[RMDB]
RNA sequence: GGGAACGACUCGAGUAGAGUCGAAAACGUCUGCACCUCAGACUAUCCAGCCCGAGGUAAAAGAAGUUGCACCUGUCUAUGAGGCUGAUACCGAACAGACACAGAAUGUUACUGUUAAACCUAAGAGCUCUAUAUUGUCCUUCGGGACAAUAUAGAGAAAAGAAACAACAACAACAAC
Reactivity to DMS in 0.01 (KOAc 150mM, MgCl2 10mM, bicine 150mM(pH8.5), 24C), signal-to-noise 3, nucleotides 027 to 126: c100g010u000c010u000g000c300a090c030c020u000c000a040g000a010c010u000a110u020c200c170a060g010c060c040c070g010a020g000g000u000a020a100a080a040g000a050a020g010u020u000g000c120a090c010c010u020g010u000c040u000a030u010g000a220g000g030c060u030g010a070u000a110c010c010g000a140a020c090a040g000a080c070a040c100a040g010a090a130u000g000u000u000a030c040u010g010u000u000a070a060a100c120c070u000a060a090g020a140g010
Reactivity to 2A3 in 0.01 (KOAc 150mM, MgCl2 10mM, bicine 150mM(pH8.5), 24C), signal-to-noise 2, nucleotides 027 to 126: c020g020u000c020u030g070c130a160c010c080u120c030a010g040a100c020u080a110u130c030c010a030g050c000c000c040g020a030g050g000u070a080a060a000a060g080a030a010g030u070u080g020c000a000c010c010u000g030u030c010u060a120u100g040a030g030g040c020u040g070a030u130a110c000c000g030a020a010c000a030g010a010c010a000c000a080g150a160a090u070g020u120u030a000c000u010g020u160u140a070a130a040c020c010u040a090a020g020a030g190
Annotation:
The data come from the RNA Mapping Database (RMDB), library 15KREP. The record gives the reactivity of an RNA of 177 nucleotides to DMS and 2A3. The reactions ran in a buffer of 150 mM KOAc, 10 mM MgCl2 and 150 mM bicine (pH 8.5), at 24 C. For 2A3 the reverse transcriptase was SuperScript II with manganese. DMS adducts were read by reverse transcription with MarathonRT.